[RMDB]
RNA sequence: GGGAACGACUCGAGUAGAGUCGAAAAAAAAAGGACCUACAGCCGAGCGAGUGACUGAAAACGGCAAAGUCUCGAAGCAUCGUUAUACCUAAAUGGUCGUAGCGAAAUAAGAGUUGUUCCCAGUAAACGUAUAAUUGCAGUUCGCUGCAAUUAUACGAAAAGAAACAACAACAACAAC
Reactivity to 2A3 in 0.01 (KOAc 150mM, MgCl2 10mM, bicine 150mM(pH8.5), 24C), signal-to-noise 2, nucleotides 027 to 126: a000a000a000a000a000g080g010a030c010c000u020a000c050a020g000c010c000g020a010g000c040g030a110g120u070g060a100c030u050g080a130a070a040a090c050g020g000c000a050a020a010g070u030c000u000c010g050a070a000g030c010a070u020c000g000u000u010a010u000a020c000c000u060a170a190a150u220g000g010u050c080g000u020a000g000c000g010a070a010a030u170a060a050g000a000g000u020u010g000u000u020c000c000c000a000g000u010a010a030a010
Reactivity to DMS in 0.01 (KOAc 150mM, MgCl2 10mM, bicine 150mM(pH8.5), 24C), signal-to-noise 2, nucleotides 027 to 126: a030a120a050a130a190g000g000a060c010c000u000a040c050a210g020c010c050g000a070g000c040g010a140g000u000g010a100c040u000g000a130a020a060a090c130g000g000c030a030a080a100g000u000c000u000c000g010a190a080g010c090a100u000c000g000u000u000a000u000a050c000c000u010a030a090a070u030g000g000u000c100g040u010a050g000c000g020a020a070a030u010a080a090g000a020g010u000u000g000u000u000c000c000c000a140g050u050a010a050a130
Chemical mapping of a 177-nucleotide RNA with 2A3 and DMS. The 2A3 profile rests on 2,192 reads. Conditions: 150 mM KOAc, 10 mM MgCl2 and 150 mM bicine (pH 8.5), 24 C. Reactivities are given for positions 27 through 126. 2A3 adducts were read by reverse transcription with SuperScript II with manganese.